[RMDB]
RNA sequence: GGGAACGACUCGAGUAGAGUCGAAAACGCAGCGCCAGCGGGGCGAGGAAAUCCGCUCGACGGGUGACGUCGAGGGCAUGCUGUAAACGCAGGAAGACAGUCUUCAUCAUCACUCCAGAGCGCCCUACGUUUUAAUAGUAUUCGUACUAUUAAAACGAAAAGAAACAACAACAACAAC
Reactivity to DMS in 0.01 (KOAc 150mM, MgCl2 10mM, bicine 150mM(pH8.5), 24C), signal-to-noise 9, nucleotides 027 to 126: c100g010c070a090g010c040g020c030c030a130g020c080g020g000g010g030c040g010a080g010g000a060a090a080u010c090c020g010c000u000c010g010a080c200g000g000g030u010g010a120c050g020u000c070g010a030g000g010g010c100a070u000g010c020u000g000u010a050a090a120c200g010c030a040g000g010a090a090g010a170c130a090g000u000c020u000u000c030a090u000c050a060u000c040a040c040u000c020c060a200g000a090g010c040g000c020c010c020u000a130
Reactivity to 2A3 in 0.01 (KOAc 150mM, MgCl2 10mM, bicine 150mM(pH8.5), 24C), signal-to-noise 9, nucleotides 027 to 126: c030g000c030a030g020c010g010c020c010a040g060c060g060g050g020g010c030g010a030g030g070a050a100a050u050c040c040g030c030u000c010g030a030c020g000g000g080u120g050a030c020g010u040c100g000a020g000g010g000c030a060u100g010c000u040g030u160a120a120a050c110g000c030a020g050g070a060a020g090a040c040a040g020u010c010u030u010c020a050u030c000a010u030c000a010c020u000c010c010a020g010a010g050c010g030c000c000c010u030a040